[RMDB]
RNA sequence: GGGAACGACUCGAGUAGAGUCGAAAAGAUAUGGAUGGAGCUCAGUAGGAGGACGCUCGGAAACGAGCGUCUACCCACCCUACGUGAGCGUUGAAAUCCUAAGUCAAAACUGGGCUUCGGCCCAGAACUGUUUGGUUUAGUUCGCUAAACCAAACAGAAAAGAAACAACAACAACAAC
Reactivity to DMS in 0.01 (KOAc 150mM, MgCl2 10mM, bicine 150mM(pH8.5), 24C), signal-to-noise 2, nucleotides 027 to 126: g000a040u000a180u030g000g010a010u000g000g000a090g010c000u010c000a080g000u010a000g000g000a150g000g000a030c010g020c010u000c010g020g010a080a070a150c000g020a050g000c000g010u000c000u000a000c000c010c060a300c060c010c000u010a020c000g020u000g000a010g000c000g000u000u000g000a090a240a020u000c000c010u000a030a050g020u010c020a100a130a090a200c010u000g000g000g000c000u000u000c230g050g020c000c000c010a000g010a060a120
Reactivity to 2A3 in 0.01 (KOAc 150mM, MgCl2 10mM, bicine 150mM(pH8.5), 24C), signal-to-noise 1, nucleotides 027 to 126: g050a050u050a050u120g000g000a000u020g030g070a030g030c000u000c030a000g000u000a000g010g010a010g000g010a040c000g000c000u000c020g050g070a060a050a030c020g000a010g000c000g000u000c000u010a020c000c000c000a010c000c000c020u020a020c030g240u050g000a000g020c010g030u110u060g010a020a020a000u030c000c000u000a200a040g070u030c020a000a020a160a210c020u000g010g010g020c000u060u120c300g140g020c040c050c000a010g030a000a020
Chemical mapping of a 177-nucleotide RNA with DMS and 2A3. For DMS the reverse transcriptase was MarathonRT. Reactivities are given for positions 27 through 126. The data come from the RNA Mapping Database (RMDB), library TTRDEL. For 2A3 the reverse transcriptase was SuperScript II with manganese.